[RMDB]
RNA sequence: GGGAACGACUCGAGUAGAGUCGAAAAGCCGGCGGGCCGGGUGCUGGCGACGUUGCUGGCCGAGAAUCGGCAGGAAGCCUUUAUCCAAUUGUUGGCCGAUCGGGCGUUCCAGUGGUCGCUCAACGCCUCGUACAUCAAGCUUCGGCUUGAUGUACGAAAAAGAAACAACAACAACAAC
Reactivity to 2A3 in 0.01 (KOAc 150mM, MgCl2 10mM, bicine 150mM(pH8.5), 24C), signal-to-noise 3, nucleotides 027 to 126: g080c010c000g010g040c020g040g000g050c000c020g030g030g040u030g040c060u010g010g000c000g000a010c020g150u150u150g050c000u040g020g000c010c000g020a040g060a120a060u040c000g000g000c020a050g050g050a020a020g030c020c020u040u110u110a110u020c030c010a040a070u100u100g110u080u140g040g000c020c020g000a020u030c020g000g010g060c060g050u120u070c000c000a010g010u060g070g040u010c030g000c010u120c050a070a070c040g010c000c020
Reactivity to DMS in 0.01 (KOAc 150mM, MgCl2 10mM, bicine 150mM(pH8.5), 24C), signal-to-noise 3, nucleotides 027 to 126: g050c030c020g000g020c110g010g000g100c090c030g000g000g060u020g000c060u000g000g000c030g040a040c020g060u030u030g000c040u000g000g000c260c010g010a130g000a190a070u000c020g040g020c020a170g000g000a120a120g000c090c070u020u010u020a080u000c030c040a140a190u030u020g010u010u000g000g010c010c030g010a100u000c020g000g000g030c040g020u000u030c000c040a060g020u000g000g010u000c030g000c020u020c050a030a110c120g020c040c040